[RMDB]
RNA sequence: GGGAACGACUCGAGUAGAGUCGAAAAAAAUUGAAACUAACUUACAUACCGAAAACCUAUUUGAUACUAUUAAGAGGAUGAUAGCAGUAAAUAGGAUUUACAAUCCCAAGGCUAAUAUAUCCGCUACCAUUGCGUACUAAUUCGUUAGUACGCAAUGAAAAGAAACAACAACAACAAC
Reactivity to 2A3 in 0.01 (KOAc 150mM, MgCl2 10mM, bicine 150mM(pH8.5), 24C), signal-to-noise 4, nucleotides 027 to 126: a000a000a000u180u050g060a140a050a020c040u050a110a000c020u100u140a040c050a060u140a080c030c040g080a060a040a010a000c010c000u000a050u020u030u030g070a060u080a090c060u040a020u180u060a110a080g060a060g300g060a030u130g020a010u020a030g020c070a020g040u120a000a030a030u010a010g000g000a010u040u020u020a050c030a030a070u020c000c000c030a010a010g110g000c020u050a110a000u100a090u030a030u130c040c030g030c080u050a060c000
Reactivity to DMS in 0.01 (KOAc 150mM, MgCl2 10mM, bicine 150mM(pH8.5), 24C), signal-to-noise 6, nucleotides 027 to 126: a030a050a080u000u010g000a120a070a060c090u000a060a060c090u010u000a080c070a070u000a100c100c040g000a060a030a070a080c010c010u000a010u000u010u000g000a140u010a060c030u000a010u000u000a090a120g020a120g000g010a090u000g000a040u000a020g020c040a030g000u000a010a020a010u000a020g010g010a250u000u000u010a070c150a070a120u000c000c010c010a090a110g000g010c080u010a050a080u000a080u010a070u000c060c060g010c100u000a110c210
Record summary:
This 177-nucleotide RNA was probed chemically with 2A3 and DMS. Reactivities are given for positions 27 through 126.